[RMDB]
RNA sequence: GGGAACGACUCGAGUAGAGUCGAAAAGUCGCCGGCGCGGCCGUCGCGGCUGCCGUGUUCGCCGGCUGGCUGCCCGAGGGCGCUCUGGCCGUCAUCCUGCCGCUGAUCAUGGCCGUGCUCUACGUGGGGAACACCCACUAUUCGUAGUGGGUGUUCCAAAAGAAACAACAACAACAAC
Reactivity to 2A3 in 0.01 (KOAc 150mM, MgCl2 10mM, bicine 150mM(pH8.5), 24C), signal-to-noise 2, nucleotides 027 to 126: g050u050c060g000c120c010g020g000c030g010c030g020g000c030c010g020u030c030g020c020g010g040c020u010g000c000c010g070u060g120u140u140c090g020c090c010g000g000c000u000g000g000c020u040g000c000c020c000g010a060g010g000g040c170g030c040u000c070u070g000g000c010c010g010u010c010a030u060c000c040u040g050c020c020g020c080u210g020a060u080c070a120u150g030g010c000c000g000u000g000c000u020c010u040a090c050g050u150g040g110
Reactivity to DMS in 0.01 (KOAc 150mM, MgCl2 10mM, bicine 150mM(pH8.5), 24C), signal-to-noise 2, nucleotides 027 to 126: g030u010c010g030c020c150g010g020c030g030c060g010g020c000c080g010u000c090g010c030g010g000c020u010g000c020c040g020u010g000u000u010c160g010c100c040g000g000c020u020g010g000c070u000g010c000c000c060g000a070g020g000g020c160g020c040u010c060u010g030g010c010c050g000u000c040a040u010c160c170u000g010c040c020g000c020u020g010a070u000c160a070u010g000g000c020c010g030u000g030c000u000c020u000a040c080g030u010g020g030
The data come from the RNA Mapping Database (RMDB), library OK2TST. The record gives the reactivity of an RNA of 177 nucleotides to 2A3 and DMS. For 2A3 the reverse transcriptase was SuperScript II with manganese. The RNA was probed in 150 mM KOAc, 10 mM MgCl2 and 150 mM bicine (pH 8.5) at 24 C.